[RMDB]
RNA sequence: GGGAACGACUCGAGUAGAGUCGAAAACGAGUAAUCCACGAUCGCUACAACGCGCUAAGCAAUGGAGAUGAUUCUUGAGGGAAGCAAUUCUGCAGAGACAUCUCCACCCUGGGGUGGCGUCGCCAGAAUACACCGACCCGUUACAGGGAAAUUGGCUCGUUGAUUAUUACUUCGGUAAUAAUCAACGAAAAGAAACAACAACAACAAC
Reactivity to 2A3 in 0.01 (KOAc 150mM, MgCl2 10mM, bicine 150mM(pH8.5), 24C), signal-to-noise 4, nucleotides 027 to 156: c050g010a030g130u160a070a100u070c040c010a060c050g040a110u110c040g020c030u120a100c040a220a060c100g040c010g000c130u110a060a030g030c050a050a170u070g020g000a010g010a000u010g030a080u130u020c000u030u030g030a120g000g030g050a030a000g050c050a050a190u040u030c010u090g050c090a000g000a000g010a030c000a000u000c000u000c000c000a010c000c000c000u020g000g000g000g030u040g040g000c120g030u030c010g010c020c010a050g080a150a110u140a080c070a020c040c000g060a040c020c000c000g010u040u100a040c020a040g000g030g040a020a000a110u100u070g030g010c020u000
Reactivity to DMS in 0.01 (KOAc 150mM, MgCl2 10mM, bicine 150mM(pH8.5), 24C), signal-to-noise 1, nucleotides 027 to 156: c070g060a220g030u010a090a120u000c000c020a050c070g010a190u000c060g000c110u010a090c060a140a050c050g000c030g060c050u020a040a140g010c040a120a160u000g000g010a040g020a060u000g010a110u010u000c040u000u000g020a180g000g010g000a120a140g010c270a050a200u000u000c020u000g000c030a300g000a020g010a090c010a010u020c010u010c000c010a010c020c000c040u000g030g020g000g030u020g020g020c010g000u000c050g020c060c030a290g010a060a090u000a050c080a080c130c060g000a090c000c000c000g030u000u000a040c070a000g000g000g010a090a080a070u000u010g010g020c050u010
Annotation: Chemical mapping of a 207-nucleotide RNA with 2A3 and DMS. The RNA was probed in 150 mM KOAc, 10 mM MgCl2 and 150 mM bicine (pH 8.5) at 24 C. For 2A3, 3,387 sequencing reads were counted. DMS adducts were read by reverse transcription with MarathonRT. The DMS profile rests on 1,770 reads.